[RMDB]
Description
Structure probing data (DMS and 2A3) for a 177-nucleotide construct. Source: RMDB library OK2TST, as collected in RNAgym. The DMS profile rests on 813 reads. The 2A3 profile rests on 1,356 reads. Conditions: 150 mM KOAc, 10 mM MgCl2 and 150 mM bicine (pH 8.5), 24 C. 2A3 adducts were read by reverse transcription with SuperScript II with manganese.
RNA sequence: GGGAACGACUCGAGUAGAGUCGAAAAGCGCGGUAUGCUGUGCCCGUUCCAGUUCACUGCAUAAAACCAGAUCAAAGGAAACACCAUGUAGCAGCGUAUGCAGAUUUUGCGCUUGCUCAAUACCGCGGUACAGUCGAUUGUUCGCAAUCGACUGUACAAAAGAAACAACAACAACAAC
Reactivity to DMS in 0.01 (KOAc 150mM, MgCl2 10mM, bicine 150mM(pH8.5), 24C), signal-to-noise 1, nucleotides 027 to 126: g020c020g030c000g030g030u000a000u000g000c180u020g020u000g030c020c040c040g010u000u000c030c000a080g000u010u010c290a090c010u000g000c030a080u000a060a020a150a080c240c040a020g010a060u010c170a120a040a130g000g000a010a090a160c010a060c030c060a060u000g060u010a060g030c000a010g010c000g000u000a060u000g000c030a070g000a170u030u010u000u000g020c010g000c010u000u000g030c040u000c040a070a050u010a030c040c040g000c030g000
Reactivity to 2A3 in 0.01 (KOAc 150mM, MgCl2 10mM, bicine 150mM(pH8.5), 24C), signal-to-noise 2, nucleotides 027 to 126: g070c020g020c010g000g010u010a010u070g020c160u070g060u010g050c010c000c010g010u050u010c010c000a020g000u110u090c130a040c100u010g000c010a050u110a130a090a040a010c050c040a030g020a130u160c040a110a050a010g030g010a000a090a000c020a030c020c000a050u060g050u080a020g000c000a000g000c000g020u000a050u190g070c100a070g110a300u070u140u160u090g000c000g000c000u090u180g000c020u000c010a000a010u060a040c000c000g030c030g000